[RMDB]
Notes:
The record gives the reactivity of an RNA of 177 nucleotides to DMS and 2A3. Reactivities are given for positions 27 through 126. The DMS profile rests on 3,609 reads. For 2A3, 2,699 sequencing reads were counted. The reactions ran in a buffer of 150 mM KOAc, 10 mM MgCl2 and 150 mM bicine (pH 8.5), at 24 C. High DMS reactivity at an A or C suggests that its Watson-Crick edge is free.

RNA sequence: GGGAACGACUCGAGUAGAGUCGAAAAAGGUGGACCAGCAGGUGCAGGAUGUGGCUGACAUGAUGCUGAGGAAGGGACUCUUCAUGAAGACGGAGCGCAUGUUCAAGAAGCCCAAGCCCGGCAAGAAUGCAUAAGAUACGUUCGCGUAUCUUAUGCAAAAAGAAACAACAACAACAAC
Reactivity to DMS in 0.01 (KOAc 150mM, MgCl2 10mM, bicine 150mM(pH8.5), 24C), signal-to-noise 4, nucleotides 027 to 126: a100g000g020u000g030g030a090c070c050a100g020c060a030g000g010u010g010c040a050g010g010a090u010g020u020g000g010c040u000g000a050c100a060u020g000a100u000g000c020u010g000a120g010g000a040a180g000g010g000a090c040u000c020u000u000c040a090u010g000a080a110g000a110c070g000g000a070g010c060g000c040a030u010g000u000u000c130a050a090g010a060a090g010c030c020c000a060a150g000c020c000c020g010g020c110a090a060g010a120a100
Reactivity to 2A3 in 0.01 (KOAc 150mM, MgCl2 10mM, bicine 150mM(pH8.5), 24C), signal-to-noise 2, nucleotides 027 to 126: a000g120g020u050g000g030a030c050c030a010g020c020a020g000g070u070g020c020a030g000g090a110u110g060u080g100g000c020u030g020a010c010a060u130g040a050u070g040c030u020g010a070g100g020a030a070g020g020g040a070c010u000c000u120u020c020a070u050g030a060a050g040a050c100g000g080a070g000c040g000c050a020u010g010u060u080c000a030a040g050a030a000g040c000c020c000a020a020g070c030c000c010g000g000c010a020a040g050a150a060